[RMDB]
RNA sequence: GGGAACGACUCGAGUAGAGUCGAAAAGAUGCUGGCUACAAGGGACAAGAUAGAAGCAAACCACCUGAUCCAGUAAACUGCUGUCCACUUCGGCUCCUCAACGGCCUCUAAGCUUAAGAGGGAGCACGAGGACGAUCUAUUUCGAUAGAUCGUCCUCAAAAGAAACAACAACAACAAC
Reactivity to DMS in 0.01 (KOAc 150mM, MgCl2 10mM, bicine 150mM(pH8.5), 24C), signal-to-noise 1, nucleotides 027 to 126: g000a070u020g000c060u000g010g030c040u000a100c100a120a150g000g000g000a150c040a080a110g060a120u000a040g000a180a060g020c080a040a000a160c080c070a000c040c080u000g000a110u010c030c000a090g030u010a020a090a120c040u000g020c120u000g000u010c020c010a100c180u000u000c180g000g030c000u000c000c000u000c010a040a090c180g020g000c030c050u000c110u010a060a170g020c000u000u000a110a200g000a010g000g060g010a040g010c020a090c070
Reactivity to 2A3 in 0.01 (KOAc 150mM, MgCl2 10mM, bicine 150mM(pH8.5), 24C), signal-to-noise 1, nucleotides 027 to 126: g020a000u040g020c050u080g060g000c010u030a060c100a080a100g070g030g000a050c130a120a040g060a200u110a130g140a150a000g040c090a090a060a090c000c030a050c010c020u000g020a080u100c040c000a020g000u060a060a240a000c040u020g060c020u080g010u080c000c000a030c040u130u110c020g030g070c000u000c000c010u000c010a020a020c010g040g000c080c000u030c110u130a010a070g030c000u060u120a040a030g050a040g050g040g010a020g030c000a040c060